[RMDB]
RNA sequence: GGGAACGACUCGAGUAGAGUCGAAAACUGGUUCAGGAGUAGCUAUAGUUGAUAGCUACUAUUCUUAUUUGAUGCCUGUGCUCUCAAUGACCGAUUGUCUGGCCGCUGAGACACAUAGGGAUUGUGAGAAUUAUUGCUGGUUCGCCAGCAAUAAUUCAAAAGAAACAACAACAACAAC
Reactivity to 2A3 in 0.01 (KOAc 150mM, MgCl2 10mM, bicine 150mM(pH8.5), 24C), signal-to-noise 1, nucleotides 027 to 126: c020u080g080g100u110u050c090a080g000g110a030g100u010a010g000c000u010a010u010a070g190u120u170g170a030u000a010g000c030u010a000c000u000a010u020u000c020u070u130a230u110u100u160g020a000u040g130c020c000u000g020u020g020c000u000c000u030c000a000a020u000g000a000c010c000g050a090u040u300g190u110c070u140g030g010c010c010g000c010u000g000a010g010a010c000a000c020a040u090a040g010g020g000a000u020u080g030u090g070a120
Reactivity to DMS in 0.01 (KOAc 150mM, MgCl2 10mM, bicine 150mM(pH8.5), 24C), signal-to-noise 3, nucleotides 027 to 126: c030u000g010g020u010u000c190a100g010g010a040g010u000a000g010c000u010a000u000a200g000u030u020g010a190u000a000g010c000u010a000c010u000a030u000u010c030u000u000a100u010u010u010g020a020u000g000c000c010u000g010u000g020c300u000c010u000c000a010a030u000g010a030c030c010g000a160u000u010g010u000c120u010g030g020c010c000g030c070u000g000a020g000a010c150a040c010a030u010a030g000g010g000a030u000u000g020u010g010a130